[RMDB]
RNA sequence: GGGAACGACUCGAGUAGAGUCGAAAACAAGUAAUCCAGCAACAAAUAAGACAAUAGCUGUGCCAAUAUAAAGCAGAAAAUUAUGAAAAUGAUAUAAUUCCUCCAUAAUCGGACUUGCUGGAGGCUACCGCUACGUAGGGUUCGCCCUACGUGGCGGAAAAGAAACAACAACAACAAC
Reactivity to 2A3 in 0.01 (KOAc 150mM, MgCl2 10mM, bicine 150mM(pH8.5), 24C), signal-to-noise 2, nucleotides 027 to 126: c040a000a050g070u060a070a120u000c010c000a000g000c000a000a040c010a100a210a060u200a130a060g030a020c000a060a100u010a110g000c040u020g000u050g020c010c010a000a000u030a000u040a250a090a000g010c010a010g000a030a150a040a020u140u060a040u040g080a100a060a080a110u100g040a010u050a020u020a300a190u170u120c000c000u030c040c000a040u070a070a050u130c090g030g060a020c090u050u040g000c020u000g000g000a000g010g000c040u120a040
Reactivity to DMS in 0.01 (KOAc 150mM, MgCl2 10mM, bicine 150mM(pH8.5), 24C), signal-to-noise 2, nucleotides 027 to 126: c070a120a130g010u000a160a060u010c030c010a020g010c010a010a060c180a130a180a090u010a090a110g010a050c100a090a110u010a060g020c030u000g020u000g010c110c130a100a060u010a070u000a050a150a070g000c030a080g010a090a040a090a040u000u010a030u000g010a070a050a020a050u000g000a140u000a060u020a060a080u000u010c020c100u000c070c020a010u000a080a090u020c090g010g010a190c150u000u000g010c000u010g010g000a030g000g000c140u020a060